[RMDB]
RNA sequence: GGGAACGACUCGAGUAGAGUCGAAAACCCCGAGGACGUUCCGCCACCACCGAUGUGGAACCGUGAAGAAGUCCAUCAGAUCUACCGCCAUUGGCGCACGGUUCUGGAUGAAUACCCAGGUAAUCGACCUAAUCGUGACUUUCGAGUCACGAUUAGGAAAAGAAACAACAACAACAAC
Reactivity to 2A3 in 0.01 (KOAc 150mM, MgCl2 10mM, bicine 150mM(pH8.5), 24C), signal-to-noise 2, nucleotides 027 to 126: c000c030c010c000g020a020g030g020a100c000g020u010u000c010c010g070c020c030a020c000c010a050c000c050g130a050u120g040u060g140g020a040a000c000c020g040u050g040a070a090g040a180a010g110u000c030c020a150u090c070a070g050a050u000c010u060a050c030c000g060c000c000a290u080u190g020g000c010g000c020a020c030g000g000u060u000c030u020g000g040a000u050g040a050a040u090a100c000c020c000a030g090g030u090a070a080u100c000g020a070
Reactivity to DMS in 0.01 (KOAc 150mM, MgCl2 10mM, bicine 150mM(pH8.5), 24C), signal-to-noise 2, nucleotides 027 to 126: c020c000c000c020g010a050g000g020a110c010g010u000u000c000c000g000c020c030a060c070c020a070c030c060g030a100u000g020u000g020g000a060a010c000c010g010u000g000a130a060g000a130a140g000u010c030c040a040u000c110a100g010a080u020c060u010a180c300c030g010c040c040a250u010u000g000g020c000g010c030a020c090g020g010u010u000c000u000g000g010a040u000g000a130a070u010a090c040c010c000a090g000g000u010a100a080u000c060g010a250
Structure probing data (2A3 and DMS) for a 177-nucleotide construct. For DMS, 1,752 sequencing reads were counted. For 2A3, 1,602 sequencing reads were counted. Values cover nucleotides 27 to 126. 2A3 adducts were read by reverse transcription with SuperScript II with manganese. Conditions: 150 mM KOAc, 10 mM MgCl2 and 150 mM bicine (pH 8.5), 24 C.